[RMDB]
RNA sequence: GGGAACGACUCGAGUAGAGUCGAAAACGACUUUAAAGGUAUUCGUACCUUUAAAGUCGCGCUCUUAAAUACAUCCUAUGUUAAGGUUCAACGGUCCCGUAGCAUUGUGUUCGCACAAUGCUACGGGCUGUAACACUAUGUUCGCAUAGUGUUACAGAAAAGAAACAACAACAACAAC
Reactivity to DMS in 0.01 (KOAc 150mM, MgCl2 10mM, bicine 150mM(pH8.5), 24C), signal-to-noise 9, nucleotides 027 to 126: c010g010a020c000u000u000u000a000a010a010g010g010u000a010u000u010c210g020u000a000c000c000u000u000u000a000a010a010g010u000c000g000c300g000c160u000c030u010u000a040a050a070u010a070c130a070u000c030c020u000a070u010g010u000u000a050a040g010g010u010u010c180a050a060c130g010g010u010c010c000c000g010u000a010g010c000a010u000u000g030u000g010u000u010c280g010c000a010c000a000a010u000g010c000u000a000c000g000g000g000
Reactivity to 2A3 in 0.01 (KOAc 150mM, MgCl2 10mM, bicine 150mM(pH8.5), 24C), signal-to-noise 3, nucleotides 027 to 126: c000g000a000c000u000u000u010a010a000a010g020g010u020a030u030u170c200g030u030a040c000c000u000u000u000a000a000a000g000u010c000g000c010g020c010u120c000u020u040a030a030a010u040a020c010a030u050c000c010u020a020u050g030u030u040a040a020g050g070u100u300c110a090a030c080g060g060u040c010c000c000g000u000a000g020c010a000u000u000g000u000g030u050u060c200g000c090a000c010a010a000u000g000c010u000a000c000g000g000g000
This 177-nucleotide RNA was probed chemically with DMS and 2A3.
Conditions: 150 mM KOAc, 10 mM MgCl2 and 150 mM bicine (pH 8.5), 24 C.
Source: RMDB library RFMREP, as collected in RNAgym.